[RMDB]
RNA sequence: GGGAACGACUCGAGUAGAGUCGAAAACAUCGCGGGCCCGGACCUGGCAUCAUGCCUUCUUGGGGGCUUUCGGCCUCUAAGCCGCCUUAUUCCGGGAUCGCGGACCGCGAUCCGACAAUGGAAGGACACAUAAGGGUAAAUUCGUUUACCCUUAUGUAAAAGAAACAACAACAACAAC
Reactivity to DMS in 0.01 (KOAc 150mM, MgCl2 10mM, bicine 150mM(pH8.5), 24C), signal-to-noise 9, nucleotides 027 to 126: c220a070u000c020g010c000g010g000g010c020c000c000g010g010a040c040c010u000g000g000c090a040u000c110a030u000g000c040c070u020u020c020u000u000g010g010g010g000g000c010u000u030u030c230g020g010c010c000u000c010u000a010a010g010c300c300g000c050c030u000u000a050u000u000c010c000g000g000g000a030u000c000g000c160g000g000a070c030c020g010c010g000a000u000c020c010g000a110c160a090a080u030g000g010a090a060g000g010a140c190
Reactivity to 2A3 in 0.01 (KOAc 150mM, MgCl2 10mM, bicine 150mM(pH8.5), 24C), signal-to-noise 9, nucleotides 027 to 126: c060a020u020c000g000c000g010g010g030c010c000c000g000g010a010c010c000u010g000g000c000a010u030c010a010u060g020c020c020u110u110c010u020u050g000g000g000g010g000c000u080u210u130c110g090g000c000c000u000c000u010a000a000g010c020c010g010c000c010u020u020a020u030u020c000c000g010g010g010a020u020c070g010c040g030g010a010c000c010g000c000g000a010u020c020c020g080a090c120a090a040u130g070g050a110a030g030g010a010c010
Chemical mapping of a 177-nucleotide RNA with DMS and 2A3.
High 2A3 reactivity points to a flexible backbone, as in loops and unpaired stretches.
For 2A3 the reverse transcriptase was SuperScript II with manganese.
DMS adducts were read by reverse transcription with MarathonRT.
The RNA was probed in 150 mM KOAc, 10 mM MgCl2 and 150 mM bicine (pH 8.5) at 24 C.